[RMDB]
The record gives the reactivity of an RNA of 177 nucleotides to 2A3 and DMS. Source: RMDB library 15KREP, as collected in RNAgym. The 2A3 profile rests on 53,852 reads. The DMS profile rests on 25,238 reads.

RNA sequence: GGGAACGACUCGAGUAGAGUCGAAAAGUCAUGAAUAUGGAUGUUAGUCUCCAUAGACAUAGGCUCUCUCUUAAGGAGUUGAUGAUGUAUGCCGCUGAUCCAGCCAUGCACAUUGCCUCCUCUAACGCAUCCCUAUAAUGUUCGCAUUAUAGGGAUGAAAAGAAACAACAACAACAAC
Reactivity to 2A3 in 0.01 (KOAc 150mM, MgCl2 10mM, bicine 150mM(pH8.5), 24C), signal-to-noise 9, nucleotides 027 to 126: g010u000c000a010u010g020a020a010u020a000u010g000g030a020u090g090u190u190a120g080u080c010u000c020c000a000u000a000g010a020c000a010u040a110g010g000c000u000c000u000c000u000c000u060u110a050a020g010g000a000g010u030u010g010a010u000g030a050u010g010u010a010u010g110c150c070g000c040u020g040a290u120c100c010a000g000c000c000a000u010g010c000a000c000a010u000u010g000c000c000u000c010c000u020c030u040a070a030c060g000
Reactivity to DMS in 0.01 (KOAc 150mM, MgCl2 10mM, bicine 150mM(pH8.5), 24C), signal-to-noise 9, nucleotides 027 to 126: g010u000c010a020u000g000a050a180u000a010u000g010g010a020u020g020u010u010a180g000u010c100u000c000c010a020u000a010g000a300c010a010u000a100g030g000c000u000c090u000c020u000c030u000u000a080a030g000g010a020g010u000u000g000a010u000g000a110u000g020u000a010u000g010c200c200g020c010u000g000a130u010c200c060a030g010c020c010a010u000g010c010a020c010a020u000u000g000c220c000u000c000c010u000c080u000a040a070c280g000